[RMDB]
RNA sequence: GGGAACGACUCGAGUAGAGUCGAAAACUCCACCUUGGGGUGCCCUAUCCGAGCACUGCUGUUUCGGUAGAAAGGCUAAGCACGUCGCAAUGACGUAAGGUGGGACUUUUCCCUACAGUUCGAGCGGCAUACGUCGCGAGUUCGCUCGCGACGUAUGAAAAGAAACAACAACAACAAC
Reactivity to DMS in 0.01 (KOAc 150mM, MgCl2 10mM, bicine 150mM(pH8.5), 24C), signal-to-noise 2, nucleotides 027 to 126: c110u010c000c000a000c020c000u010u000g010g000g000g030u010g010c020c000c020u010a090u000c000c010g020a040g030c030a080c270u000g050c170u010g010u010u000u000c020g000g010u000a020g000a100a140a130g000g010c010u000a070a110g040c240a030c040g020u000c010g030c210a100a120u010g010a000c000g010u010a000a000g000g030u000g000g010g010a000c090u000u000u000u000c020c000c000u010a080c150a070g010u010u000c050g010a110g030c080g000g010
Reactivity to 2A3 in 0.01 (KOAc 150mM, MgCl2 10mM, bicine 150mM(pH8.5), 24C), signal-to-noise 2, nucleotides 027 to 126: c010u000c000c000a000c010c000u010u000g090g040g010g070u150g030c030c000c000u000a050u000c010c020g000a010g000c050a070c190u270g110c090u040g120u070u210u120c020g000g050u020a020g050a020a050a000g030g000c010u020a060a040g070c060a020c020g020u020c010g000c190a220a300u300g020a000c000g010u020a000a010g030g000u000g000g010g000a020c030u060u040u010u020c000c000c000u040a110c050a060g070u040u100c010g020a050g010c030g090g040
Conditions: 150 mM KOAc, 10 mM MgCl2 and 150 mM bicine (pH 8.5), 24 C. This 177-nucleotide RNA was probed chemically with DMS and 2A3. For DMS, 1,529 sequencing reads were counted. For DMS the reverse transcriptase was MarathonRT. Values cover nucleotides 27 to 126. The 2A3 profile rests on 1,541 reads. For 2A3 the reverse transcriptase was SuperScript II with manganese.